[RMDB]
RNA sequence: GGGAACGACUCGAGUAGAGUCGAAAAUAGCGCAGUACUGACGAUCGGCCGUAUCGAUCGUGUCGAUCUGUCACUCGAUCCGCAUAGCGCGCUGAUCGCGCUGCGCCGGCGCGACAUGCGCGACGUGCUUUCGCACCAACUUCGGUUGGUGCGAAAGAAAAGAAACAACAACAACAAC
Reactivity to DMS in 0.01 (KOAc 150mM, MgCl2 10mM, bicine 150mM(pH8.5), 24C), signal-to-noise 2, nucleotides 027 to 126: u000a090g060c030g060c140a050g020u000a080c150u000g010a040c000g000a040u000c000g030g010c040c050g000u020a300u000c150g000a050u000c030g000u010g080u010c010g000a010u000c030u020g000u000c030a030c100u010c070g010a050u000c040c050g020c010a040u010a070g020c000g010c000g030c000u000g020a140u000c010g030c080g000c020u010g030c100g050c070c090g000g000c050g000c020g000a030c040a080u010g010c010g010c000g000a030c100g060u000g000
Reactivity to 2A3 in 0.01 (KOAc 150mM, MgCl2 10mM, bicine 150mM(pH8.5), 24C), signal-to-noise 2, nucleotides 027 to 126: u170a030g060c040g030c080a010g030u060a090c080u060g010a010c020g000a000u000c000g000g000c020c040g000u080a190u220c150g070a100u100c030g020u060g000u050c000g000a020u010c050u250g010u000c010a010c000u040c030g080a080u040c050c020g040c060a020u060a070g080c020g010c010g000c030u010g020a280u000c010g000c000g000c000u050g030c140g110c070c080g020g000c020g000c000g020a050c010a050u130g000c010g000c020g030a020c000g000u010g000